Chemical mapping of a 177-nucleotide RNA with 2A3 and DMS. The DMS profile rests on 3,134 reads. Conditions: 150 mM KOAc, 10 mM MgCl2 and 150 mM bicine (pH 8.5), 24 C. For DMS the reverse transcriptase was MarathonRT. It was measured as part of the RMDB library OK2TST.
[RMDB]
RNA sequence: GGGAACGACUCGAGUAGAGUCGAAAAUGGCUAUUGGUGCUGAAAGCCACCAGGUCCGUCAAGGACCAGACAUCCAGCUCGUGGUCGGGCGGCUCGAUGCCCAGCACCCGCAGCAGCAGCCGGGAGGGCGUUUUACGAUAUUCGUAUCGUAAAACGCAAAAGAAACAACAACAACAAC
Reactivity to 2A3 in 0.01 (KOAc 150mM, MgCl2 10mM, bicine 150mM(pH8.5), 24C), signal-to-noise 2, nucleotides 027 to 126: u050g020g000c010u000a020u150u120g020g010u030g020c000u040g010a080a050a030g030c050c000a030c010c030a020g000g000u030c000c020g090u130c180a150a190g040g000a010c020c000a000g010a000c020a040u060c060c030a010g000c050u100c170g090u110g030g160u080c030g060g110g010c020g000g000c030u040c050g010a050u090g000c040c010c000a000g000c010a010c010c010c010g010c070a050g000c000a010g000c000a030g080c040c020g000g000g000a060g000g080
Reactivity to DMS in 0.01 (KOAc 150mM, MgCl2 10mM, bicine 150mM(pH8.5), 24C), signal-to-noise 3, nucleotides 027 to 126: u010g010g020c010u000a300u010u010g020g000u010g010c000u000g020a110a080a080g010c060c010a050c080c090a110g010g010u000c000c010g000u020c250a180a170g000g000a000c000c000a060g020a060c060a120u010c040c090a100g010c060u000c070g030u000g000g010u000c070g020g000g030c040g020g010c050u000c210g000a050u010g010c020c050c010a060g030c070a060c020c010c140g020c070a070g010c020a070g010c080a070g020c020c020g000g000g000a090g000g010